[RMDB]
Chemical mapping of a 177-nucleotide RNA with 2A3 and DMS.
The RNA was probed in 150 mM KOAc, 10 mM MgCl2 and 150 mM bicine (pH 8.5) at 24 C.
For DMS, 1,254 sequencing reads were counted.
Reactivities are given for positions 27 through 126.
Source: RMDB library RFMREP, as collected in RNAgym.
RNA sequence: GGGAACGACUCGAGUAGAGUCGAAAAGUCGUGACCGGAUUCCUUGACUCACUUUGUGUGCGCGUUGAUUGCGCACGGCCACCUUCCGCUCAGACCGGCGCGGAGGUGUAGCGAUAGGACAGCAGCGCUUCCUCAGAUACUUCGGUAUCUGAGGAAGAAAAGAAACAACAACAACAAC
Reactivity to 2A3 in 0.01 (KOAc 150mM, MgCl2 10mM, bicine 150mM(pH8.5), 24C), signal-to-noise 2, nucleotides 027 to 126: g000u010c030g020u020g020a050c020c000g050g070a120u100u090c010c000u030u080g010a050c000u050c100a090c060u110u190u190g160u070g010u030g030c020g040c030g050u050u130g230a160u090u260g000c000g010c020a000c000g020g000c000c000a030c010c000u130u000c000c020g000c000u070c060a060g040a240c070c050g010g000c030g000c040g010g000a000g000g010u020g030u020a020g040c040g040a040u040a050g020g020a000c010a000g000c000a020g010c040g000
Reactivity to DMS in 0.01 (KOAc 150mM, MgCl2 10mM, bicine 150mM(pH8.5), 24C), signal-to-noise 2, nucleotides 027 to 126: g010u010c020g000u010g000a220c020c030g000g000a160u010u000c020c010u000u000g000a190c080u010c060a100c140u000u010u020g010u000g000u000g010c000g020c000g010u010u010g000a110u010u010g020c010g020c030a010c020g010g010c100c020a010c010c010u000u010c010c000g030c000u000c080a110g010a110c120c070g000g000c140g020c110g010g000a010g010g010u000g010u020a040g030c060g010a100u010a060g000g000a110c140a080g020c090a050g000c130g010